[RMDB]
RNA sequence: GGGAACGACUCGAGUAGAGUCGAAAAUGAGAAGCAUUCGUGCUUCUCAGAAAUGCUGCCCAAAGAGGACCUGGGGGUGUCUGGGCUGCUAAUCUCAUCAGCUAACCGCGAUCUUCGGAUCGCGGAACUCAUGUAGGAAUUUCGAUUCCUACAUGAGAAAAGAAACAACAACAACAAC
Reactivity to DMS in 0.01 (KOAc 150mM, MgCl2 10mM, bicine 150mM(pH8.5), 24C), signal-to-noise 5, nucleotides 027 to 126: u000g000a000g010a010a000g020c000a030u000u010c200g030u000g010c000u000u010c000u000c000a010g000a070a100a080u000g020c060u000g000c000c000c010a050a150a140g010a150g000g000a050c040c040u000g020g010g010g010g020u000g000u000c050u000g010g010g000c010u000g000c030u010a060a090u010c040u000c030a110u020c160a090g010c170u000a120a170c010c000g000c000g010a010u000c000u000u010c200g020g010a010u000c000g040c010g010g010a010a040
Reactivity to 2A3 in 0.01 (KOAc 150mM, MgCl2 10mM, bicine 150mM(pH8.5), 24C), signal-to-noise 4, nucleotides 027 to 126: u030g000a000g000a000a000g000c010a010u050u120c220g090u060g000c000u010u000c000u000c000a000g010a000a060a010u110g000c010u030g000c000c010c000a080a180a030g220a060g050g020a020c040c080u150g090g070g000g000g000u020g000u000c030u060g020g020g000c000u020g000c010u020a030a060u010c020u010c020a200u030c040a040g080c060u090a070a090c010c000g000c000g020a010u000c000u050u080c210g110g000a000u010c000g000c010g000g000a000a000